[RMDB]
The record gives the reactivity of an RNA of 207 nucleotides to 2A3. Values are in units of 0.01, from 0 to 300, in steps of 10. The reactions ran in a buffer of 150 mM KOAc, 10 mM MgCl2 and 150 mM bicine (pH 8.5), at 24 C. The data come from the RNA Mapping Database (RMDB), library M2RFPK.
RNA sequence: GGGAACGACUCGAGUAGAGUCGAAAAAAUCGUCGACGCAUCGACGACGGUCCUGCCAUGGGACCGUAACGAGGACAUGUCGCCUCGAAUGGCGUCGGGGAGCCGGCAGCUUACCCCAAGGAUGAGCAAAAGAAUGAAACGUUCGCGUUUCAUUCAAGUCUCCGGGCAUCUUCGGAUGCCCGGAGACAAAAGAAACAACAACAACAAC
Reactivity to 2A3 in 0.01 (KOAc 150mM, MgCl2 10mM, bicine 150mM(pH8.5), 24C), signal-to-noise 1, nucleotides 027 to 156: a010a010u070c080g020u010c000g030a010c060g010c080a030u040c020g060a020c000g000a000c000g020g010u000c000c000u010g050c060c060a080u050g020g000g000a000c000c000g000u000a010a010c010g010a000g000g010a010c030a070u070g040u110c030g020c000c010u000c000g000a020a020u080g000g020c010g040u000c040g000g010g000g010a030g020c010c040g010g030c010a000g000c020u050u020a100c000c000c000c020a020a010g110g010a050u120g020a020g060c040a050a030a160a050g000a010a000u010g020a000a000a000c000g010u060u050c230g000c020g180u020u000u000c000a000u020u000c000a010a000